The data come from the RNA Mapping Database (RMDB), library OK1LIB. Chemical mapping of a 177-nucleotide RNA with DMS and 2A3. For DMS, 29,933 sequencing reads were counted. The reactions ran in a buffer of 150 mM KOAc, 10 mM MgCl2 and 150 mM bicine (pH 8.5), at 24 C. DMS adducts were read by reverse transcription with MarathonRT.

RNA sequence: GGGAACGACUCGAGUAGAGUCGAAAAGGAGUGUCGUUAGAGGCCGGUUUUGCGACGGGCAGAUGCUGAUUCCGGCCUAUUUGCAUCGUUUUUCUGUGUUGCGCGAGACCUUGGUCGUUUGCCUCCAGGCAGCUGGCGUGUUCGCGCGCUGGCUGCCAAAAGAAACAACAACAACAAC
Reactivity to DMS in 0.01 (KOAc 150mM, MgCl2 10mM, bicine 150mM(pH8.5), 24C), signal-to-noise 6, nucleotides 027 to 126: g010g000a050g010u010g000u020c050g020u020u010a070g000a100g010g010c010c010g010g010u010u010u010u020g010c030g010a090c070g010g000g010c110a080g000a050u010g000c040u000g010a140u010u010c020c020g000g000c020c060u000a010u010u010u010g000c040a030u010c040g000u000u010u020u010u020c060u010g000u020g000u020u010g010c030g000c040g000a090g000a060c040c000u020u020g010g010u010c020g000u000u010u010g000c030c010u010c050c040a170
Reactivity to 2A3 in 0.01 (KOAc 150mM, MgCl2 10mM, bicine 150mM(pH8.5), 24C), signal-to-noise 9, nucleotides 027 to 126: g080g010a060g020u100g060u100c080g040u110u160a080g040a040g160g000c010c010g010g020u010u040u070u090g040c050g030a050c040g050g050g010c040a040g020a100u120g020c030u070g030a080u120u040c010c010g010g000c010c010u010a050u020u080u070g010c020a040u020c070g030u040u040u030u080u060c060u040g090u020g050u110u090g020c010g000c010g020a020g010a030c010c020u070u100g020g000u030c030g030u070u220u090g060c000c000u020c020c010a020
Overview: For 2A3 the reverse transcriptase was SuperScript II with manganese. For 2A3, 28,392 sequencing reads were counted.